[RMDB]
RNA sequence: GGGAACGACUCGAGUAGAGUCGAAAAGCACCUCUGCGCUCAUGGCGAUCGGGCGUCCGCACCGGGCUUGCCAUCAACAUGCGCCCUCUGGAGGAGUCCGGGCGGGUGCAGGUUGGCUAAGGAGGGGCGCACCGGGUCAGGGAGGCAACUCAGCAGCGAGUUGGAAAUUCUUCGGAAUUUCCAACUCAAAAGAAACAACAACAACAAC
Reactivity to 2A3 in 0.01 (KOAc 150mM, MgCl2 10mM, bicine 150mM(pH8.5), 24C), signal-to-noise 1, nucleotides 027 to 156: g030c020a020c060c030u070c020u030g030c060g010c000u010c030a080u070g020g020c010g050a080u100c050g020g100g000c000g050u020c000c030g210c060a160c020c040g180g030g040c040u040u080g040c070c000a030u010c040a070a100c070a300u070g040c000g020c000c000c010u070c010u020g050g000a050g080g040a080g190u000c010c010g020g000g000c140g010g000g000u000g030c000a000g000g030u000u040g050g000c030u050a020a070g060g000a030g010g010g000g000c010g020c000a030c020c040g020g000g020u010c010a040g000g110g000a020g070g070c010a000a040c010u110c060a030g000c010a010g050c020
Chemical mapping of a 207-nucleotide RNA with 2A3. Source: RMDB library ARCHII, as collected in RNAgym.